[RMDB]
RNA sequence: GGGAACGACUCGAGUAGAGUCGAAAAGUUCAGUGGGAUUUCAGGAUACCCAGUGUAUGGAUUCAAGGGGAAUCAAGUUAAACUGUAAGACUGUGUCAUAGGCUCAGUGCUGAGAGGAAAGUGAAGAGGGUAAGGAUAGGUUCGCCUAUCCUUACCCAAAAGAAACAACAACAACAAC
Reactivity to DMS in 0.01 (KOAc 150mM, MgCl2 10mM, bicine 150mM(pH8.5), 24C), signal-to-noise 2, nucleotides 027 to 126: g010u000u000c070a040g000u010g000g000g000a070u000u010u010c040a060g030g000a080u010a070c040c000c000a040g000u000g000u000a300u000g010g000a050u040u030c070a150a050g030g000g000g010a080a040u040c070a060a060g000u000u010a070a060a180c060u010g000u040a080a100g010a070c090u040g000u020g050u000c010a100u000a090g000g000c000u010c060a050g000u010g020c010u000g000a130g000a150g000g000a080a040a060g000u040g000a100a100g030a300
Reactivity to 2A3 in 0.01 (KOAc 150mM, MgCl2 10mM, bicine 150mM(pH8.5), 24C), signal-to-noise 2, nucleotides 027 to 126: g020u080u000c000a000g000u030g000g090g000a090u050u200u220c000a000g120g120a100u130a080c000c000c080a000g040u040g030u090a010u080g090g020a060u210u000c070a130a170g080g000g000g100a000a040u000c000a090a000g060u160u210a080a100a000c000u020g000u120a000a000g060a080c000u000g090u010g000u060c090a070u000a280g030g000c030u040c080a000g000u000g230c040u000g060a030g000a000g060g160a040a000a060g050u120g030a080a000g060a190
The record gives the reactivity of an RNA of 177 nucleotides to DMS and 2A3. Conditions: 150 mM KOAc, 10 mM MgCl2 and 150 mM bicine (pH 8.5), 24 C. For 2A3 the reverse transcriptase was SuperScript II with manganese. The data come from the RNA Mapping Database (RMDB), library OK1LIB. For DMS the reverse transcriptase was MarathonRT.